Source: RMDB library RFMREP, as collected in RNAgym. Chemical mapping of a 177-nucleotide RNA with 2A3 and DMS. For DMS, 17,320 sequencing reads were counted. DMS adducts were read by reverse transcription with MarathonRT. High DMS reactivity at an A or C suggests that its Watson-Crick edge is free. For 2A3, 12,284 sequencing reads were counted. Conditions: 150 mM KOAc, 10 mM MgCl2 and 150 mM bicine (pH 8.5), 24 C.
RNA sequence: GGGAACGACUCGAGUAGAGUCGAAAAAAGCGUAACCUCUUGUAAAUCUCCAACACUAAGCUUGGUUACAGCUCUGUUGAAGAAUUGCAGGUGGUAGGUGAAAGAGUGACCGGUUCGCCGGUCACUCCAACUAUGUAUGGUUCGCCAUACAUAGUUGAAAAGAAACAACAACAACAAC
Reactivity to 2A3 in 0.01 (KOAc 150mM, MgCl2 10mM, bicine 150mM(pH8.5), 24C), signal-to-noise 6, nucleotides 027 to 126: a000a000g050c020g010u030a070a080c000c000u000c000u020u000g010u010a030a040a060u010c010u020c010c000a010a000c020a020c080u180a060a020g030c010u100u110g100g240u300u210a100c060a050g010c000u020c020u040g010u000u010g010a020a020g000a030a040u030u010g000c000a000g020g000u020g010g000u030a030g010g130u060g050a160a100a040g010a000g000u000g000a000c010c010g020g040u030u050c220g030c040c000g020g000u000c000a000c000u000c010
Reactivity to DMS in 0.01 (KOAc 150mM, MgCl2 10mM, bicine 150mM(pH8.5), 24C), signal-to-noise 8, nucleotides 027 to 126: a080a130g010c030g010u010a150a060c010c000u000c000u000u000g010u000a010a020a050u000c010u000c020c000a010a010c010a020c210u010a110a050g010c010u000u000g030g000u000u010a090c170a020g010c010u000c160u000g010u000u010g010a020a010g000a020a060u000u000g000c010a010g010g000u000g000g010u000a070g010g010u000g010a090a070a100g000a020g010u000g000a010c000c000g010g010u000u010c240g010c000c000g000g000u000c000a000c000u000c000